[RMDB]
RNA sequence: GGGAACGACUCGAGUAGAGUCGAAAAGAUAUGGAUUCCGACGAUUGUCAGUAGCAUGGCCGGGGUAUAUCGGAAACGAUAUACAAGAAUAUGACCCUACUUGGAUUUAUCGUCGGAAUCCUAAGUCGUUAUCUAUAUCGUUCGCGAUAUAGAUAACAAAAGAAACAACAACAACAAC
Reactivity to DMS in 0.01 (KOAc 150mM, MgCl2 10mM, bicine 150mM(pH8.5), 24C), signal-to-noise 5, nucleotides 027 to 126: g000a100u010a290u000g010g000a010u000u000c000c000g010a030c010g010a030u000u000g020u000c010a040g010u000a040g010c300a140u020g020g010c110c040g020g000g010g010u000a000u000a000u000c000g000g000a130a110a230c010g000a010u000a000u010a020c020a120a130g000a150a160u010a100u010g000a060c010c030c010u010a010c010u010u010g020g010a050u000u010u000a010u000c010g020u000c000g010g000a010a000u000c000c000u010a010a100g010u000c130
Reactivity to 2A3 in 0.01 (KOAc 150mM, MgCl2 10mM, bicine 150mM(pH8.5), 24C), signal-to-noise 5, nucleotides 027 to 126: g080a030u120a060u170g000g010a000u000u010c010c000g000a000c000g000a030u000u150g040u060c010a010g010u050a020g060c280a300u150g060g000c060c040g110g000g150g010u010a010u010a000u010c000g020g000a070a050a010c000g000a000u010a000u000a010c000a000a040g190a080a050u300a230u300g130a160c030c000c000u020a030c060u090u220g250g020a140u300u300u210a100u080c000g000u000c020g030g000a000a010u000c000c000u000a000a000g000u010c050